[RMDB]
RNA sequence: GGGAACGACUCGAGUAGAGUCGAAAAGAAGGAGUGAACUCGCCGGUGCAUCAGUAUCUUCAGACAGCCAAUCAAAAAGAUUAGACAUAUCAGAUGAUGUAUUAGUUUGUUGUCGUGGUUUUGGUGUAGGAACAGUACUACUAGGUAGAAGAAUAGGGUAAGAACUGAUUUUCGAAUCAGUUCUUACAAAAGAAACAACAACAACAAC
Reactivity to DMS in 0.01 (KOAc 150mM, MgCl2 10mM, bicine 150mM(pH8.5), 24C), signal-to-noise 3, nucleotides 027 to 156: g020a100a100g020g000a090g030u010g010a070a120c040u000c040g040c060c020g010g010u000g020c020a040u000c030a080g030u000a080u000c040u000u000c050a180g020a070c050a120g040c060c040a030a080u010c040a030a070a080a090a180g000a100u010u000a100g030a070c020a090u000a070u000c020a120g020a100u000g030a030u000g020u000a040u000u000a090g010u000u000u000g020u010u020g030u000c030g030u000g010g020u000u000u000u000g000g000u000g030u000a090g000g010a060a050c060a090g010u010a090c030u000a040c060u000a060g040g020u000a070g020a080a080g010a060a070u000a100g000g010
Reactivity to 2A3 in 0.01 (KOAc 150mM, MgCl2 10mM, bicine 150mM(pH8.5), 24C), signal-to-noise 6, nucleotides 027 to 156: g060a030a030g050g040a040g020u060g030a060a050c020u030c060g040c010c040g050g000u030g000c020a030u010c010a030g060u060a070u030c050u060u090c050a050g000a060c010a010g020c040c030a030a040u050c020a020a070a070a050a040g040a030u080u120a040g050a040c020a030u150a020u090c030a040g060a100u070g010a010u040g070u080a090u060u030a040g060u030u020u070g030u010u010g020u020c050g020u030g030g020u040u040u030u050g010g010u030g010u010a020g000g020a040a030c010a010g040u040a020c010u020a020c010u030a050g030g070u070a030g050a090a010g020a040a090u150a160g090g010